[RMDB]
RNA sequence: GGGAACGACUCGAGUAGAGUCGAAAAACGUUCAUGGCUUUGGAGUAAUCAAGGAUAUUUCGUAAUAGUUAGGCGUUUUAGUUCAAAAGAAGAAAAACGGAGAAUCGUUGCGACUGUAUAUGAUGGAAGACUUACUCUCAUUCGUGAGAGUAAGUCUAAAAGAAACAACAACAACAAC
Reactivity to 2A3 in 0.01 (KOAc 150mM, MgCl2 10mM, bicine 150mM(pH8.5), 24C), signal-to-noise 1, nucleotides 027 to 126: a010c050g030u110u030c000a060u080g040g040c040u130u030u090g020g030a060g040u120a090a040u120c060a060a020g180g000a040u000a070u090u090u010c000g010u020a000a040u030a080g000u030u000a000g080g000c040g000u000u000u020u050a010g030u000u070c040a230a090a020a070g020a110a040g030a070a130a000a010a010c050g100g000a050g030a080a030u020c020g000u000u020g000c000g000a010c030u030g100u060a020u000a010u180g080a060u110g030g050a050
Reactivity to DMS in 0.01 (KOAc 150mM, MgCl2 10mM, bicine 150mM(pH8.5), 24C), signal-to-noise 3, nucleotides 027 to 126: a090c080g000u000u010c040a060u010g010g020c020u000u010u000g000g010a110g010u000a060a060u000c070a090a070g020g000a080u010a060u010u000u000c020g010u020a030a030u000a040g010u000u000a080g010g000c010g010u000u000u000u000a130g000u000u000c040a090a080a100a140g000a070a050g000a070a040a030a030a050c060g000g000a100g000a050a030u000c050g010u000u010g020c010g000a050c170u010g000u000a050u010a060u010g000a080u010g000g010a190